This 177-nucleotide RNA was probed chemically with 2A3 and DMS.
The reactions ran in a buffer of 150 mM KOAc, 10 mM MgCl2 and 150 mM bicine (pH 8.5), at 24 C.
For DMS the reverse transcriptase was MarathonRT.
RNA sequence: GGGAACGACUCGAGUAGAGUCGAAAAGAUAUGGACUGGUUCUUAGGGAGCACGAGGAACGUUUGACGUAGAUCGGAAACGAUCUACCGAGUUCGUAGUGCGAAGAACUAAGAACCAGUCCUAAGUCCUAAUAUGCUAGGUUCGCCUAGCAUAUUAGAAAAGAAACAACAACAACAAC
Reactivity to 2A3 in 0.01 (KOAc 150mM, MgCl2 10mM, bicine 150mM(pH8.5), 24C), signal-to-noise 2, nucleotides 027 to 126: g020a040u160a070u210g020g010a000c010u010g000g040u000u020c000u000u000a030g000g000g050a050g010c000a000c000g030a080g190g040a030a020c060g060u080u260u300g070a060c070g020u000a000g000a020u000c000g000g020a040a040a060c030g000a000u000c010u010a010c010c010g000a020g000u000u000c010g020u040a010g000u000g000c020g000a000a000g010a000a000c010u020a000a000g000a000a000c000c000a000g010u000c000c000u000a010a000g000u000c000
Reactivity to DMS in 0.01 (KOAc 150mM, MgCl2 10mM, bicine 150mM(pH8.5), 24C), signal-to-noise 9, nucleotides 027 to 126: g010a120u010a270u000g000g010a020c000u000g000g000u000u000c010u000u000a010g010g000g000a130g020c000a010c000g000a300g000g000a010a010c000g010u010u010u010g020a240c300g000u000a000g010a010u000c010g010g010a150a090a200c000g010a020u000c000u000a000c000c010g000a070g010u000u000c010g000u000a300g010u000g010c010g010a070a160g000a120a180c010u000a000a000g010a010a010c000c000a000g000u000c000c000u000a010a060g010u000c040